[RMDB]
RNA sequence: GGGAACGACUCGAGUAGAGUCGAAAAGAGAGAGUUUAACAAUAUGGGCCCUCUUGCUAGCUUAGUCGUGGCAUUGAUGACCGACAGGUCACAUGAAGUAGUAAGGUUGACUGGGUUAGUGUGUAACGACUACUGUGUGUACUACAAGAACAAUGCGCAUGUAUCAACCUUUCGAGGUUGAUACAUGAAAAGAAACAACAACAACAAC
Reactivity to DMS in 0.01 (KOAc 150mM, MgCl2 10mM, bicine 150mM(pH8.5), 24C), signal-to-noise 4, nucleotides 027 to 156: g020a060g030a040g010a060g020u010u010u000a110a130c040a130a140u000a300u000g000g000g030c000c000c020u000c030u000u010g020c040u010a100g010c030u000u000a080g030u000c030g050u000g020g020c040a090u000u010g010a140u010g000a060c040c020g000a170c290a100g020g010u000c010a050c040a070u000g010a070a090g010u000a040g020u010a060a090g010g020u000u000g010a070c040u030g010g010g020u010u000a080g020u010g020u000g020u010a050a050c070g010a070c020u000a040c030u000g000u010g020u010g030u000a060c070u010a080c060a060a060g010a060a090c040a040a050u000g000c040g000
Reactivity to 2A3 in 0.01 (KOAc 150mM, MgCl2 10mM, bicine 150mM(pH8.5), 24C), signal-to-noise 6, nucleotides 027 to 156: g060a000g020a000g010a010g020u100u150u170a140a060c090a110a110u160a180u300g010g020g010c010c020c000u010c020u030u040g020c030u030a040g010c020u040u070a030g020u020c020g040u060g040g020c010a050u020u140g100a170u060g010a140c020c000g080a090c080a130g020g010u010c000a010c000a030u110g040a050a040g030u110a010g030u060a070a090g080g060u110u110g040a020c020u020g060g030g000u070u060a070g020u050g010u020g030u080a060a010c050g040a010c020u040a040c030u060g020u020g010u010g020u100a040c020u020a010c040a070a030g030a100a000c040a100a060u100g050c050g010